Chemical mapping of a 177-nucleotide RNA with DMS and 2A3. 2A3 adducts were read by reverse transcription with SuperScript II with manganese. For DMS the reverse transcriptase was MarathonRT. The RNA was probed in 150 mM KOAc, 10 mM MgCl2 and 150 mM bicine (pH 8.5) at 24 C.
RNA sequence: GGGAACGACUCGAGUAGAGUCGAAAAUUGUCCGGGUUCGCCCGGACAAAGCGGGAGGCGACCGGAGGCCUGCUCCCAGGCGAUCCCACGCCUCGCUCCGGAGCGUGAUGACCUUCGGGUCAUCAAAGCUAUGGUAUUGGUUCGCCAAUACCAUAGCAAAAGAAACAACAACAACAAC
Reactivity to DMS in 0.01 (KOAc 150mM, MgCl2 10mM, bicine 150mM(pH8.5), 24C), signal-to-noise 8, nucleotides 027 to 126: u000u000g000u000c000c000g010g010g020u000u010c230g010c000c000c000g000g000a000c000a000a020a070g010c130g010g020g010a040g010g010c060g010a130c050c030g010g000a040g010g010c080c060u000g010c040u000c030c040c020a090g000g010c000g000a090u000c010c010c020a300c020g000c010c000u000c060g010c020u000c020c010g010g000a240g010c160g000u010g000a010u000g000a010c000c000u000u010c190g010g010g010u000c000a000u000c000a030a070a100
Reactivity to 2A3 in 0.01 (KOAc 150mM, MgCl2 10mM, bicine 150mM(pH8.5), 24C), signal-to-noise 5, nucleotides 027 to 126: u050u020g000u000c000c000g000g000g010u030u050c210g060c020c000c000g000g000a000c000a000a000a000g010c020g010g030g010a020g040g060c080g060a120c040c010g000g010a010g030g070c020c060u020g020c020u020c010c020c000a000g010g000c010g010a070u050c010c000c010a020c010g000c000c010u030c060g020c010u000c010c000g020g010a050g070c070g060u060g010a000u010g000a010c000c000u030u050c270g080g000g000u000c000a000u000c000a010a030a010